[RMDB]
RNA sequence: GGGAACGACUCGAGUAGAGUCGAAAAUCAUCAUCGGAACGGGAAGCACAUGCGCAUUGGUGCCGCCCACAUAGCGAUAAAGCGGCAGGCCGCUGGCUUGCGCAGCCGCCUUGGCAACCGCCAGGGAGCUAUCCAGCCAUUUCGAUGGCUGGAUAGCAAAAGAAACAACAACAACAAC
Reactivity to 2A3 in 0.01 (KOAc 150mM, MgCl2 10mM, bicine 150mM(pH8.5), 24C), signal-to-noise 1, nucleotides 027 to 126: u000c000a010u030c000a020u050c000g050g020a030a010c040g040g000g020a040a020g060c040a020c000a080u140g040c100g010c090a080u050u180g050g010u010g000c010c020g000c010c110c000a080c000a080u240a030g070c030g050a060u090a070a100a000g020c030g010g000c020a020g030g030c010c040g240c240u100g040g000c000u000u000g000c070g040c010a000g060c000c000g000c000c000u020u000g000g000c060a090a170c090c050g020c010c000a000g010g010g000a050
Reactivity to DMS in 0.01 (KOAc 150mM, MgCl2 10mM, bicine 150mM(pH8.5), 24C), signal-to-noise 1, nucleotides 027 to 126: u000c090a020u040c080a030u000c030g020g020a130a130c190g010g000g000a110a080g000c020a020c030a080u000g030c230g060c150a120u000u020g050g010u000g000c010c220g000c010c000c050a020c200a110u000a180g000c020g000a060u000a000a140a120g000c020g000g000c010a040g020g010c010c010g030c140u000g080g040c000u000u010g020c020g060c060a140g030c000c040g010c030c020u000u000g000g000c000a170a060c220c190g010c030c000a010g000g000g000a090

Description
This 177-nucleotide RNA was probed chemically with 2A3 and DMS. The RNA was probed in 150 mM KOAc, 10 mM MgCl2 and 150 mM bicine (pH 8.5) at 24 C. 2A3 adducts were read by reverse transcription with SuperScript II with manganese. It was measured as part of the RMDB library OK2TST. The 2A3 profile rests on 1,136 reads.